[RMDB]
RNA sequence: GGGAACGACUCGAGUAGAGUCGAAAAUCGGAAAGCAGUGCCAGCGGGAUGCACGAAACCUUUCCAGCGGUUUCCGAGCGGUCGAGGCGUUCAACCACGUAUCCGUUGCAGUUGUUUGCGAACUUUGAAACGUCUAUGUUGGCACUGAGACCCACUAGCGAACGGUUACGUUCGCGUAACCGUUCGCAAAAGAAACAACAACAACAAC
Reactivity to DMS in 0.01 (KOAc 150mM, MgCl2 10mM, bicine 150mM(pH8.5), 24C), signal-to-noise 1, nucleotides 027 to 156: u000c040g000g000a060a170a250g040c010a010g000u010g000c000c020a040g010c030g030g060g020a050u020g040c030a270c040g020a040a040a020c040c000u000u010u030c190c250a150g040c210g030g010u000u010u010c020c020g000a150g040c020g000g030u000c020g010a080g070g010c010g020u000u000c050a110a110c200c050a110c020g000u000a060u000c060c040g020u000u000g000c020a090g000u010u000g000u020u010u010g020c020g010a070a080c030u000u010u000g010a110a080a030c020g010u000c020u000a080u000g020u000u000g040g030c000a010c000u000g010a120g000a210c020c010c000a060c080u040a300
Reactivity to 2A3 in 0.01 (KOAc 150mM, MgCl2 10mM, bicine 150mM(pH8.5), 24C), signal-to-noise 1, nucleotides 027 to 156: u030c000g000g000a120a040a000g010c000a000g030u000g020c010c010a010g030c000g070g080g000a030u040g010c000a000c030g020a000a000a020c010c000u040u170u140c130c040a120g120c060g020g000u000u010u000c020c030g030a070g000c040g000g020u060c030g030a000g000g000c000g000u000u000c010a020a040c030c110a130c140g030u030a060u070c030c000g010u000u060g120c070a070g010u020u010g030u020u060u030g000c000g050a030a030c030u100u040u000g070a130a070a000c000g000u000c000u030a080u210g010u010u010g000g000c000a000c000u020g000a000g000a000c000c020c000a030c110u060a020
The record gives the reactivity of an RNA of 207 nucleotides to DMS and 2A3. As a SHAPE reagent, 2A3 marks flexible, mostly unpaired nucleotides at the ribose 2'-OH. For DMS, 2,510 sequencing reads were counted.